[RMDB]
RNA sequence: GGGAACGACUCGAGUAGAGUCGAAAACGUCUUGCCGUGGAGGUCGAACCCCAUCAGCCCGGUGAGGCUGAAGUUGAACUCCCUGGUCCUCCAGUAGGCCCGGUGGACCUUCCGGUUGAGGGCGAGGUCGUUGAGGUAGUUUCGACUACCUCAACGAAAAAGAAACAACAACAACAAC
Reactivity to 2A3 in 0.01 (KOAc 150mM, MgCl2 10mM, bicine 150mM(pH8.5), 24C), signal-to-noise 1, nucleotides 027 to 126: c000g020u010c010u020u090g000c010c000g130u300g000g000a020g000g000u050c060g050a140a150c000c060c000c020a050u040c000a000g010c020c020c020g300g170u240g020a250g000g000c000u020g000a030a000g020u200u300g040a070a050c030u010c010c000c000u010g030g020u100c030c010u010c010c030a080g020u160a010g120g000c010c000c020g070g020u040g010g000a020c010c040u010u010c000c000g000g110u010u130g100a060g000g020g000c000g020a040g010g090
Reactivity to DMS in 0.01 (KOAc 150mM, MgCl2 10mM, bicine 150mM(pH8.5), 24C), signal-to-noise 2, nucleotides 027 to 126: c050g040u000c020u000u010g000c030c000g010u020g030g000a010g000g000u000c010g010a060a210c050c020c050c050a200u000c010a020g000c000c010c010g010g010u000g000a120g000g010c000u020g000a010a110g030u000u000g010a070a200c090u000c090c030c020u000g000g000u000c020c000u000c040c160a190g000u010a030g020g000c060c000c040g000g000u020g010g010a020c020c000u010u010c030c020g010g000u000u020g010a050g020g000g030c000g010a120g010g030